[RMDB]
An RNA of 177 nucleotides, treated with 2A3 and DMS and read out base by base. Source: RMDB library OK2TRN, as collected in RNAgym. The RNA was probed in 150 mM KOAc, 10 mM MgCl2 and 150 mM bicine (pH 8.5) at 24 C. For DMS the reverse transcriptase was MarathonRT.
RNA sequence: GGGAACGACUCGAGUAGAGUCGAAAACACUUCUACAUGGACAGAGCACGCACGAUCAGGCACCAAUGAAUACAUACAUUUCCAGAUGUGUAUGAUCACUUGUAUCUUACAAAUGAUGCCCAGUUUGGUCCUCAAUGACCUUCGGGUCAUUGAGGACAAAAGAAACAACAACAACAAC
Reactivity to 2A3 in 0.01 (KOAc 150mM, MgCl2 10mM, bicine 150mM(pH8.5), 24C), signal-to-noise 1, nucleotides 027 to 126: c010a000c010u080u000c030u070a050c010a180u090g030g030a030c010a000g000a010g040c020a010c060g040c010a050c070g000a010u030c000a020g070g000c010a010c010c020a010a050u120g000a030a010u100a120c000a010u120a010c000a050u030u010u070c020c000a040g050a150u050g060u030g000u000a060u050g030a030u010c000a010c070u020u010g040u060a040u050c060u080u060a070c020a010a030a050u080g020a030u030g050c000c040c000a010g030u100u080u080g120
Reactivity to DMS in 0.01 (KOAc 150mM, MgCl2 10mM, bicine 150mM(pH8.5), 24C), signal-to-noise 1, nucleotides 027 to 126: c110a130c110u010u020c040u000a090c040a080u000g030g000a130c030a040g000a090g040c060a110c120g010c100a070c120g030a030u000c010a030g000g010c100a010c090c040a090a080u000g000a080a060u010a110c050a050u000a050c050a050u000u000u020c200c150a110g000a030u000g010u000g010u000a020u000g000a060u010c030a000c090u010u000g000u000a040u030c140u020u020a000c050a010a040a070u010g030a050u000g010c020c030c030a080g010u000u000u000g030

Record summary
The 2A3 profile rests on 959 reads.